[RMDB]
RNA sequence: GGGAACGACUCGAGUAGAGUCGAAAAGGUGGGCGGCCGGAACAACGGCAAGGGGCUGCGCCACUUCAGCAUGAAGGUGUGCGAGAAGGUGGAGAGCAAGGGGCGCACCACCUACAACGAGGUCGCCAUUUCUAGGCCGAUUCGUCGGCCUAGAAAUAAAAGAAACAACAACAACAAC
Reactivity to DMS in 0.01 (KOAc 150mM, MgCl2 10mM, bicine 150mM(pH8.5), 24C), signal-to-noise 2, nucleotides 027 to 126: g040g020u000g000g010g010c000g020g010c000c000g010g000a220a120c180a040a170c150g000g000c060a100a040g020g010g050g010c270u000g000c000g010c010c000a080c010u020u000c030a180g000c070a090u020g010a120a160g000g010u000g010u000g020c040g000a120g000a030a020g010g010u020g000g010a090g020a080g020c180a020a010g000g020g010g000c020g010c010a050c010c010a000c020c000u010a030c090a070a170c070g000a120g000g020u000c000g010c000c050
Reactivity to 2A3 in 0.01 (KOAc 150mM, MgCl2 10mM, bicine 150mM(pH8.5), 24C), signal-to-noise 1, nucleotides 027 to 126: g070g010u080g070g000g030c000g020g000c000c050g050g070a200a060c100a070a040c020g110g000c040a020a020g070g010g000g000c150u080g010c010g030c000c000a040c000u020u000c000a020g050c020a060u050g090a250a140g240g070u300g000u000g130c020g040a120g040a140a040g090g030u200g040g070a140g020a000g070c000a020a050g040g070g050g000c020g000c010a010c020c000a050c000c000u020a030c020a040a010c020g050a010g010g000u020c000g030c020c000